[RMDB]
RNA sequence: GGGAACGACUCGAGUAGAGUCGAAAAGAAAAGACGAUGUUAUUAUGAUUCUCGAGUAAUAGCAGGUCACGCGUACUACUCGCCGAACGGAAGGCAGACUGUUCGCGCAAUGAAACGAGAAAGAAAACCAUGGUAUCACGUUCGCGUGAUACCAUGGAAAAGAAACAACAACAACAAC
Reactivity to 2A3 in 0.01 (KOAc 150mM, MgCl2 10mM, bicine 150mM(pH8.5), 24C), signal-to-noise 4, nucleotides 027 to 126: g030a000a220a000a020g050a010c070g050a210u010g020u000u000a030u000u030a020u070g070a140u090u000c010u000c010g010a010g030u010a020a030u000a000g040c010a000g050g050u100c010a010c090g010c020g030u010a020c000u020a040c000u080c100g000c010c000g060a120a070c060g100g060a050a080g080g000c020a030g080a220c010u000g020u060u050c000g000c030g010c110a040a130u240g140a060a010a070c010g010a000g070a020a090a010g100a010a050a010a000
Reactivity to DMS in 0.01 (KOAc 150mM, MgCl2 10mM, bicine 150mM(pH8.5), 24C), signal-to-noise 2, nucleotides 027 to 126: g030a080a100a250a070g020a000c070g000a130u000g000u000u030a050u000u040a010u000g000a060u020u020c020u000c000g020a300g000u000a070a000u000a070g060c010a030g020g030u050c060a250c050g030c060g010u000a110c080u010a130c150u000c160g000c130c000g000a080a000c020g040g000a110a140g000g000c200a000g000a060c040u030g000u040u000c040g000c090g030c240a140a240u090g010a070a070a140c070g010a020g000a000a050a070g000a100a010a210a130
Overview:
An RNA of 177 nucleotides, treated with 2A3 and DMS and read out base by base. It was measured as part of the RMDB library OK1LIB. For 2A3, 4,055 sequencing reads were counted.